Overview
An RNA of 177 nucleotides, treated with 2A3 and DMS and read out base by base. The 2A3 profile rests on 1,304 reads. The data come from the RNA Mapping Database (RMDB), library OK2TRN.
[RMDB]
RNA sequence: GGGAACGACUCGAGUAGAGUCGAAAAUUGGCUACGUUCGGGAGGGAUAACCGCUGAAAGCAUCUAAGCGGGAAGCCUGCUUCGAGAUGAGGACUCCCACCCACUUGAUGGGUUAAGGCUCCCAGUAAACGCAAAUAGGGUUCGCCCUAUUUGCGUUAAAAGAAACAACAACAACAAC
Reactivity to 2A3 in 0.01 (KOAc 150mM, MgCl2 10mM, bicine 150mM(pH8.5), 24C), signal-to-noise 1, nucleotides 027 to 126: u100u070g050g020c010u020a010c050g080u030u090c020g060g000g020a040g030g000g000a010u020a050a030c030c000g030c030u020g070a150a090a020g120c000a080u040c000u060a000a030g000c010g020g000g000a030a030g050c000c000u030g000c010u070u050c030g150a150g090a180u110g000a080g120g010a020c030u020c020c010c000a030c000c010c010a000c000u080u220g100a190u060g170g030g000u010u070a040a000g060g000c000u030c010c000c000a020g030u100a020
Reactivity to DMS in 0.01 (KOAc 150mM, MgCl2 10mM, bicine 150mM(pH8.5), 24C), signal-to-noise 3, nucleotides 027 to 126: u020u010g000g010c020u000a120c160g020u000u000c090g010g000g000a170g020g010g000a070u010a100a190c020c000g030c040u010g000a100a130a140g010c060a060u010c070u000a200a060g020c010g000g010g010a100a100g000c020c010u000g000c040u000u010c050g000a060g010a140u010g010a090g000g000a190c080u000c010c010c040a160c010c000c010a050c010u000u010g010a120u010g000g000g000u010u000a060a060g000g000c060u000c000c000c020a160g000u000a040
For DMS the reverse transcriptase was MarathonRT. Conditions: 150 mM KOAc, 10 mM MgCl2 and 150 mM bicine (pH 8.5), 24 C.